[RMDB]
RNA sequence: GGGAACGACUCGAGUAGAGUCGAAAAGAUAUGGACGAUCUCCGAUGAACUACUCUACCGGUCGGAAACGACCGCGUAGAGCAUCGGAGGAUCGUCCUAAGUCAAAUCCGAGUCUUCGGACUCGGAAGUCUUACGUCGUGUUCGCACGACGUAAGACAAAAGAAACAACAACAACAAC
Reactivity to DMS in 0.01 (KOAc 150mM, MgCl2 10mM, bicine 150mM(pH8.5), 24C), signal-to-noise 3, nucleotides 027 to 126: g020a050u000a300u000g010g020a030c020g020a000u000c010u000c000c010g020a010u000g000a090a060c130u030a300c000u000c000u000a000c010c000g010g000u000c010g010g000a100a090a170c000g010a000c000c010g030c300g000u000a010g000a000g000c010a000u000c000g000g000a020g010g000a020u000c000g010u000c000c000u010a000a080g010u000c030a090a160a210u000c000c000g000a030g000u000c000u000u040c190g010g000a010c000u000c000g000g000a000a010
Reactivity to 2A3 in 0.01 (KOAc 150mM, MgCl2 10mM, bicine 150mM(pH8.5), 24C), signal-to-noise 2, nucleotides 027 to 126: g030a020u100a060u200g000g000a020c000g000a010u000c010u020c010c040g000a000u000g000a060a110c150u260a100c010u300c000u000a020c000c020g040g020u010c030g020g000a080a100a020c020g000a000c000c000g000c090g020u010a010g030a000g000c000a000u000c000g000g040a100g000g000a000u020c000g000u000c000c000u000a020a000g000u010c030a070a030a070u000c000c010g000a000g010u000c000u050u280c300g130g000a000c000u010c010g020g000a000a060